Notes: Structure probing data (DMS and 2A3) for a 207-nucleotide construct. For DMS, 1,991 sequencing reads were counted. For 2A3, 5,195 sequencing reads were counted. The RNA was probed in 150 mM KOAc, 10 mM MgCl2 and 150 mM bicine (pH 8.5) at 24 C.
RNA sequence: GGGAACGACUCGAGUAGAGUCGAAAAACGGUCGUACGCGACCGAGGCGCGGCUAGGUCGACGGACCGAACAAUGGCACCCCGCAUUCUGCCAUCCGCCGCGCAGCUUCUUCUCAAACGGUGCGGAAAAAAGUAGGACACCUUCGGGUGUCCUACAACUACUGUUCCAUGUUCGCAUGGAACAGUAGAAAAGAAACAACAACAACAAC
Reactivity to DMS in 0.01 (KOAc 150mM, MgCl2 10mM, bicine 150mM(pH8.5), 24C), signal-to-noise 1, nucleotides 027 to 156: a140c000g050g040u000c010g010u000a090c140g030c010g000a030c020c000g010a030g050g020c030g000c030g000g040c080u000a110g010g050u010c000g000a200c300g020g000a040c010c010g020a140a040c300a140a070u030g000g000c020a060c010c050c000c010g060c020a040u000u000c050u000g020c000c010a040u000c010c030g000c010c000g000c030g080c000a000g000c070u000u010c040u000u000c090u020c060a130a110a120c110g020g000u020g020c040g000g000a000a050a120a060a070a140g010u030a000g010g010a040c000a030c000c010u000u000c300g020g050g050u000g020u010c000c020u000a000c010a000a060
Reactivity to 2A3 in 0.01 (KOAc 150mM, MgCl2 10mM, bicine 150mM(pH8.5), 24C), signal-to-noise 3, nucleotides 027 to 156: a020c000g000g000u020c010g010u050a040c260g010c020g130a000c000c000g000a050g000g010c010g000c010g000g020c000u010a010g000g000u020c040g130a220c210g210g010a000c000c000g000a000a010c010a010a000u000g000g000c000a010c000c160c010c000g000c010a030u300u120c020u030g000c000c000a010u010c010c030g010c000c010g000c000g000c000a000g000c010u140u080c010u070u010c030u020c020a070a090a040c050g030g000u010g000c020g000g000a080a000a000a000a010a050g010u000a000g000g000a000c000a000c010c010u020u080c210g020g020g000u000g000u000c000c000u000a000c000a000a000